[RMDB]
RNA sequence: GGGAACGACUCGAGUAGAGUCGAAAAUAAGCUCAAUUUGACCUGCCAAUUCGGCGAGCUCGCCGUCAUGCGCUUUACUGGUGAGGGCCCCACUUUGCAGUUUAACAGCGACUUCAAUGCUGCCAUACAUAUGUUGGCACUUCGGUGCCAACAUAUGAAAAGAAACAACAACAACAAC
Reactivity to DMS in 0.01 (KOAc 150mM, MgCl2 10mM, bicine 150mM(pH8.5), 24C), signal-to-noise 2, nucleotides 027 to 126: u000a130a070g030c020u020c030a070a100u010u020u000g000a100c060c000u020g000c010c060a110a060u000u000c120g000g000c020g010a090g000c020u020c000g000c010c120g000u040c050a010u010g000c110g010c020u000u020u050a020c130u040g000g000u020g050a160g000g000g010c020c010c030c020a070c030u000u010u010g000c020a030g000u040u010u000a070a240c110a040g000c120g000a070c070u070u040c170a060a090u020g020c010u000g000c000c070a060u060a150
Reactivity to 2A3 in 0.01 (KOAc 150mM, MgCl2 10mM, bicine 150mM(pH8.5), 24C), signal-to-noise 5, nucleotides 027 to 126: u190a020a010g020c020u030c070a110a130u120u020u150g090a070c000c010u040g020c030c020a070a100u130u110c060g020g000c010g020a020g070c050u030c040g010c010c010g080u060c040a050u130g030c040g010c040u050u060u110a070c040u060g040g000u060g050a080g010g020g000c000c010c010c010a030c020u040u040u100g040c050a030g000u030u040u070a110a060c020a020g040c020g060a050c020u100u060c130a060a060u100g000c010u030g030c000c010a100u120a170
This 177-nucleotide RNA was probed chemically with DMS and 2A3. The RNA was probed in 150 mM KOAc, 10 mM MgCl2 and 150 mM bicine (pH 8.5) at 24 C. The DMS profile rests on 2,748 reads. Reactivities are given for positions 27 through 126. Values are in units of 0.01, from 0 to 300, in steps of 10. The 2A3 profile rests on 4,501 reads.